RNA sequence: GGGAACGACUCGAGUAGAGUCGAAAAGGCAUUUGGCAGAAGCGCGCUAACCGCGCCCUUUGCGAUGCUUGUUACAGGAGAAGUGUCCGGUUCGAUCCCUGCGUGGGUUAUCCACGGCGGAAGCGGCAUCCUUCUUUUCCUUCGGGAAAAGAAGGAUAAAAGAAACAACAACAACAAC
Reactivity to 2A3 in 0.01 (KOAc 150mM, MgCl2 10mM, bicine 150mM(pH8.5), 24C), signal-to-noise 5, nucleotides 027 to 126: g050g000c010a020u080u170u300g140g000c020a020g000a110a000g040c020g030c000g020c070u020a080a030c130c030g020c000g000c000c030c000u010u060u000g020c010g030a020u000g010c000u000u030g130u100u150a110c070a030g060g050a070g070a210a040g100u010g050u090c040c010g020g040u030u020c030g010a070u030c000c010c010u010g010c030g000u040g000g050g040u190u150a120u130c000c000a010c010g010g000c030g010g030a050a060g050c030g000g010c020
Reactivity to DMS in 0.01 (KOAc 150mM, MgCl2 10mM, bicine 150mM(pH8.5), 24C), signal-to-noise 4, nucleotides 027 to 126: g010g010c010a020u000u020u040g040g020c000a030g010a030a050g010c300g010c000g000c040u020a110a130c300c230g000c010g000c000c040c020u000u010u000g020c000g010a010u000g010c000u000u000g000u020u020a090c110a050g000g000a110g000a080a070g020u020g000u010c000c010g010g020u010u000c030g000a130u000c020c020c010u000g020c010g030u010g000g000g010u020u030a070u020c010c000a000c010g010g000c120g010g000a040a050g010c050g000g000c160